[RMDB]
RNA sequence: GGGAACGACUCGAGUAGAGUCGAAAACCUCGGGCCGAAGGGUUGAGUAGCACUCAAAGGGAGGAAUCCACUCGGAGUAGAACAGAGAAAUCACCUCCAGAGGACCCCUUCAGCGAACAGAGGCGCUAGCCAGUUUAAUGUUCGCAUUAAACUGGCUAAAAGAAACAACAACAACAAC
Reactivity to 2A3 in 0.01 (KOAc 150mM, MgCl2 10mM, bicine 150mM(pH8.5), 24C), signal-to-noise 2, nucleotides 027 to 126: c000c000u020c000g060g010g030c020c040g030a000a000g010g010g000u020u050g020a000g030u130a020g070c070a040c090u030c010a020a040a060g160g000g010a020g030g020a050a040u050c020c010a020c030u000c020g090g070a120g070u190a100g080a170a050c100a050g070a000g030a090a120a040u060c030a150c010c000u000c000c000a020g000a000g030g030a060c000c000c010c010u000u020c020a020g010c010g050a050a030c030a040g020a030g010g000c060g010c070u030
Reactivity to DMS in 0.01 (KOAc 150mM, MgCl2 10mM, bicine 150mM(pH8.5), 24C), signal-to-noise 2, nucleotides 027 to 126: c010c000u010c050g000g000g000c020c020g010a080a070g010g000g030u000u010g010a040g000u010a080g020c060a300c010u000c010a060a090a120g000g010g010a050g000g000a040a110u000c020c060a090c020u000c070g000g010a040g020u010a140g000a180a120c100a190g000a070g010a110a060a130u000c070a110c070c040u000c000c010a120g000a040g000g000a120c210c010c010c010u000u000c020a040g000c000g020a040a070c010a130g000a070g000g000c060g020c120u000

The record gives the reactivity of an RNA of 177 nucleotides to 2A3 and DMS. Conditions: 150 mM KOAc, 10 mM MgCl2 and 150 mM bicine (pH 8.5), 24 C. DMS adducts were read by reverse transcription with MarathonRT. The DMS profile rests on 1,148 reads. For 2A3 the reverse transcriptase was SuperScript II with manganese. The 2A3 profile rests on 1,877 reads.